[RMDB]
RNA sequence: GGGAACGACUCGAGUAGAGUCGAAAAUACAGAUCCUUUUUCAUCCCAUGAUCCCCAGGGGUGUAUUUCCUGUGAAGCUAAUGAAGUUUAAGAUUGUGGCACCUCCCUUCCACAAGCCCUAGGAGAGGCCCUUGUAGUGCAUUUACAUGAAUAUAUGCAAAACAUCGAUGUUCGCAUCGAUGUUUUGAAAAGAAACAACAACAACAAC
Reactivity to DMS in 0.01 (KOAc 150mM, MgCl2 10mM, bicine 150mM(pH8.5), 24C), signal-to-noise 1, nucleotides 027 to 156: u010a130c060a120g040a120u010c000c030u000u000u020u000u020c020a100u000c010c010c000a200u000g010a090u000c000c000c020c000a110g020g030g060g050u000g020u000a050u010u000u000c000c010u020g040u000g020a110a100g050c000u010a120a090u020g000a060a120g020u000u030u000a060a140g010a130u020u000g050u000g030g000c300a040c000c030u020c030c000c000u020u000c010c050a060c050a060a140g020c050c030c050u010a060g010g030a090g050a050g010g010c040c000c030u020u000g040u010a100g010u010g010c000a060u000u000u000a080c060a040u000g010a060a080u000a060u020a040u000g000
Reactivity to 2A3 in 0.01 (KOAc 150mM, MgCl2 10mM, bicine 150mM(pH8.5), 24C), signal-to-noise 1, nucleotides 027 to 156: u140a000c010a030g160a110u150c040c000u140u110u020u060u120c000a020u060c030c000c030a070u070g030a130u050c050c000c000c000a000g010g010g020g000u000g010u030a110u010u040u060c000c000u030g070u020g130a060a020g000c010u090a110a100u170g120a150a010g020u170u050u160a110a050g070a070u080u050g050u110g000g020c020a090c020c020u030c010c040c010u060u000c050c010a010c020a030a000g030c060c000c020u040a010g030g000a040g000a010g000g040c040c000c020u070u040g050u010a040g010u000g040c040a110u010u000u210a080c010a100u080g000a040a010u190a010u110a040u170g050